[RMDB]
RNA sequence: GGGAACGACUCGAGUAGAGUCGAAAAGAUAUGGAUCCGGUAGCUUUUGACGCUCGGGGUGUCGGAAACGACACGCCGUGAGCGAUAAGCUACGGGAUCCUAAGUCAAAGCGACGUUCGCGUCGCAAGACUUCGUAUGAGUUCGCUCAUACGAAGUCAAAAGAAACAACAACAACAAC
Reactivity to 2A3 in 0.01 (KOAc 150mM, MgCl2 10mM, bicine 150mM(pH8.5), 24C), signal-to-noise 3, nucleotides 027 to 126: g040a000u090a040u140g020g000a010u000c020c080g200g000u000a000g000c000u210u150u170u300g300a180c130g000c000u010c020g040g000g010g000u000g000u000c010g010g000a090a050a060c000g000a000c000a020c000g110c000c000g130u150g040a000g010c020g010a040u040a140a000g000c000u000a000c040g000g000g010a000u000c000c000u010a040a010g010u030c040a000a100a180g020c000g000a000c020g010u080u170c300g010c030g100u020c000g000c010a010a010
Reactivity to DMS in 0.01 (KOAc 150mM, MgCl2 10mM, bicine 150mM(pH8.5), 24C), signal-to-noise 2, nucleotides 027 to 126: g030a040u000a300u010g010g010a000u000c000c000g020g020u000a010g010c000u000u000u000u000g010a250c090g000c010u010c010g040g000g010g040u000g010u010c020g000g010a080a090a180c000g020a020c010a010c000g020c010c030g020u000g020a030g040c000g040a060u000a020a020g000c000u000a000c020g000g010g010a000u000c000c000u000a020a060g010u010c010a130a150a130g010c010g020a000c010g020u000u030c230g000c010g030u000c000g010c020a060a090